Structure probing data (2A3 and DMS) for a 177-nucleotide construct.
RNA sequence: GGGAACGACUCGAGUAGAGUCGAAAAACGUAUGAUACGUCAUACGAAUUGUUCUUUGGUCUUUCAGCCAUGACCUGACCUUCUGUCUGUGAGACCAAAGAACUACUACGGUGCAUACGUGCACCGAUAACCGUACGGGAUUCGUCCCGUACGGUUAAAAAGAAACAACAACAACAAC
Reactivity to 2A3 in 0.01 (KOAc 150mM, MgCl2 10mM, bicine 150mM(pH8.5), 24C), signal-to-noise 7, nucleotides 027 to 126: a000c010g000u010a010u010g010a010u020a040c240g080u010c010a000u000a010c010g030a080a070u090u090g000u000u000c000u000u000u010g000g000u000c000u010u010u000c000a010g020c030c020a110u220g050a050c020c080u070g160a140c020c040u060u030c020u030g020u010c000u000g020u010g010a000g010a000c000c000a000a000a000g000a000a000c000u000a000c010u020a020c000g020g000u000g010c000a010u020a080c240g100u030g000c000a000c010c000g000a020
Reactivity to DMS in 0.01 (KOAc 150mM, MgCl2 10mM, bicine 150mM(pH8.5), 24C), signal-to-noise 3, nucleotides 027 to 126: a130c030g020u000a000u010g000a010u000a080c160g010u000c000a040u000a010c000g010a090a110u020u010g010u000u000c000u000u010u010g010g010u000c000u010u010u000c000a020g010c040c010a010u030g000a030c240c030u020g020a140c280c160u020u000c040u000g000u000c000u000g000u030g000a010g000a000c000c000a000a010a000g000a010a000c000u010a050c090u000a140c010g010g010u000g010c000a050u010a080c170g030u010g000c020a020c000c000g000a020
About this RNA:
The RNA was probed in 150 mM KOAc, 10 mM MgCl2 and 150 mM bicine (pH 8.5) at 24 C.